An RNA of 177 nucleotides, treated with DMS and 2A3 and read out base by base.
RNA sequence: GGGAACGACUCGAGUAGAGUCGAAAAUCUUUUUCCCAGUUGCCAAAAUCAUGUAAUGGCCGCGUGAGGAAUACGUUGAUCGGUUAUGUAAUUUCUAAUGUAACCGAUCUUUUAUUCUUUGCUGCUACUUUCAUGGGUUUUUCGAAACCCAUGAAAGAAAAGAAACAACAACAACAAC
Reactivity to DMS in 0.01 (KOAc 150mM, MgCl2 10mM, bicine 150mM(pH8.5), 24C), signal-to-noise 2, nucleotides 027 to 126: u030c050u000u000u000u000u000c000c000c000a220g000u070u010g010c000c020a020a070a190a130u050c090a040u010g060u040a170a160u040g020g020c000c210g000c040g090u000g020a060g010g010a010a000u000a000c260g040u020u010g000a000u000c010g010g010u000u010a040u000g000u010a030a110u030u070u040c300u020a030a010u000g020u000a000a000c000c000g030a000u000c000u000u000u000u000a010u000u010c000u000u020u000g010c020u000g000c020u020a070
Reactivity to 2A3 in 0.01 (KOAc 150mM, MgCl2 10mM, bicine 150mM(pH8.5), 24C), signal-to-noise 3, nucleotides 027 to 126: u060c020u000u200u010u060u060c010c010c020a030g090u060u050g060c010c000a020a170a110a220u050c090a120u110g050u300a300a010u070g000g010c010c050g000c030g010u030g010a030g000g010a020a010u020a050c110g060u030u060g000a000u000c000g000g000u000u030a000u020g090u030a100a210u040u260u300c160u170a180a000u100g020u000a000a000c000c000g010a000u000c000u000u020u000u010a000u000u000c000u000u000u030g000c010u080g000c000u000a050

The DMS profile rests on 2,476 reads. The reactions ran in a buffer of 150 mM KOAc, 10 mM MgCl2 and 150 mM bicine (pH 8.5), at 24 C.